[RMDB]
RNA sequence: GGGAACGACUCGAGUAGAGUCGAAAAGCACCGCGUCAGCUUCGCGACCGCGACCCUGCCAACCGAGUGCGUAAGCCAAGGGCAGGCGUGCCGCCAGGGCGUCCGACCUAUCCAGCGCUGCCCGCGCACAACUAGCUGUUUUCGAACAGCUAGUUGUAAAAGAAACAACAACAACAAC
Reactivity to 2A3 in 0.01 (KOAc 150mM, MgCl2 10mM, bicine 150mM(pH8.5), 24C), signal-to-noise 4, nucleotides 027 to 126: g020c020a030c050c020g020c030g060u060c070a050g010c030u120u070c040g010c030g090a100c040c060g000c030g070a100c020c000c000u020g020c010c030a060a050c080c040g060a070g040u210g030c020g040u120a100a030g030c030c020a060a130g030g010g000c020a010g020g010c020g040u060g040c010c010g030c000c040a070g040g050g010c010g020u020c010c020g050a140c010c010u050a100u040c030c010a020g000c010g000c020u050g020c000c010c010g000c000g010c000
Reactivity to DMS in 0.01 (KOAc 150mM, MgCl2 10mM, bicine 150mM(pH8.5), 24C), signal-to-noise 7, nucleotides 027 to 126: g010c040a100c060c030g030c070g020u010c050a090g020c060u000u000c070g020c030g000a090c180c110g020c030g000a090c100c010c010u000g020c030c040a100a130c180c070g000a130g010u000g020c010g010u000a120a120g010c020c040a150a130g000g010g010c040a050g000g000c060g010u000g010c030c020g020c050c120a120g000g000g020c030g010u010c040c030g000a100c040c020u000a080u010c060c080a160g000c030g000c010u000g010c030c030c030g010c090g010c080
Conditions: 150 mM KOAc, 10 mM MgCl2 and 150 mM bicine (pH 8.5), 24 C. The record gives the reactivity of an RNA of 177 nucleotides to 2A3 and DMS. For DMS the reverse transcriptase was MarathonRT. DMS (dimethyl sulfate) methylates the pairing face of unpaired adenines and cytosines. It was measured as part of the RMDB library OK2TRN.